[RMDB]
Chemical mapping of a 177-nucleotide RNA with 2A3 and DMS. For 2A3 the reverse transcriptase was SuperScript II with manganese. The data come from the RNA Mapping Database (RMDB), libraries RFM100 and RFMREP.
RNA sequence: GGGAACGACUCGAGUAGAGUCGAAAACGCACAUUCCAACGGCUUGCCUGCCCCGGAUGAACUGUUGAUAAAAAAGAGGGCCAGCAUCCGUUUCCAGACGGCCCUGAGUGGAUUGUGACGUAACAUGACGCUGUAGGUAAUUCGUUACCUACAGCGUAAAAGAAACAACAACAACAAC
Reactivity to 2A3 in 0.01 (KOAc 150mM, MgCl2 10mM, bicine 150mM(pH8.5), 24C), signal-to-noise 3, nucleotides 027 to 126: c030g000c000a000c000a040u020u000c000c000a050a020c060g020g010c030u060u280g000c000c000u020g030c010c030c020c010g090g060a090u050g050a070a120c050u030g090u180u060g080a180u230a110a150a020a060a010a040g100a080g040g030g030c000c000a020g000c020a000u000c020c000g040u070u110u150c060c000a000g010a040c000g000g070c000c000c000u030g050a050g080u020g010g010a030u000u010g010u000g090a190c010g000u000a050a010c040a090u160g050
Reactivity to DMS in 0.01 (KOAc 150mM, MgCl2 10mM, bicine 150mM(pH8.5), 24C), signal-to-noise 5, nucleotides 027 to 126: c020g020c010a020c020a030u010u010c000c000a060a070c090g000g020c040u000u020g030c020c020u010g000c160c070c180c020g000g000a070u000g000a110a160c080u010g020u010u010g010a110u030a010a090a090a080a090a090g010a090g010g010g000c040c000a090g010c100a060u000c020c010g030u020u000u010c210c020a080g000a050c040g000g000c010c010c070u000g000a070g010u010g000g000a030u010u010g010u010g000a130c020g010u010a100a120c120a130u030g010